[RMDB]
RNA sequence: GGGAACGACUCGAGUAGAGUCGAAAAAGGCAGAAGCAGAGUUUCACUUGUGGCUAAAAGAGAUACAACCAUUUUUCGGGUUUACUUGUGAGUUACAACCUGAAUACGUCCUUCUUGGCAAAACAGUCAAACACGGUAGAACAUUUAACCCAAUCAAUAGAGAAAGUCUAUUCGUAGACUUUCUCUAAAAAGAAACAACAACAACAAC
Reactivity to 2A3 in 0.01 (KOAc 150mM, MgCl2 10mM, bicine 150mM(pH8.5), 24C), signal-to-noise 3, nucleotides 027 to 156: a010g040g000c010a010g020a050a010g010c030a010g030a020g050u030u090u080c040a020c040u100u090g040u030g080g020c020u040a030a070a070a000g040a010g010a020u070a110c070a060a040c040c040a060u060u000u000u040u080c020g010g010g010u030u030u020a020c020u100u080g050u020g160a070g020u050u040a030c010a030a020c020c010u010g010a020a020u070a060c040g070u070c000c010u050u060c050u050u040g020g000c010a010a040a020a120c010a030g050u050c000a010a060a010c060a020c050g020g030u040a030g030a100a010c010a010u040u080u130a070a040c010c000c000a010a080u120c050a060a030
Reactivity to DMS in 0.01 (KOAc 150mM, MgCl2 10mM, bicine 150mM(pH8.5), 24C), signal-to-noise 2, nucleotides 027 to 156: a050g020g000c030a040g020a060a110g030c080a130g030a090g030u000u000u000c060a030c080u010u000g050u000g010g030c000u000a060a100a060a160g000a070g010a160u000a110c050a060a040c020c000a100u000u000u000u000u010c020g040g000g010u000u000u000a030c040u000u000g000u000g030a100g020u010u000a090c070a300a190c030c010u020g020a050a060u000a100c090g000u000c020c020u020u010c040u000u000g000g050c020a050a030a080a060c090a120g000u000c030a070a070a080c080a090c060g010g000u000a080g010a090a080c000a080u020u010u000a070a070c000c010c040a030a290u010c020a010a240
This 207-nucleotide RNA was probed chemically with 2A3 and DMS.
The reactions ran in a buffer of 150 mM KOAc, 10 mM MgCl2 and 150 mM bicine (pH 8.5), at 24 C.
For DMS, 3,288 sequencing reads were counted.
High DMS reactivity at an A or C suggests that its Watson-Crick edge is free.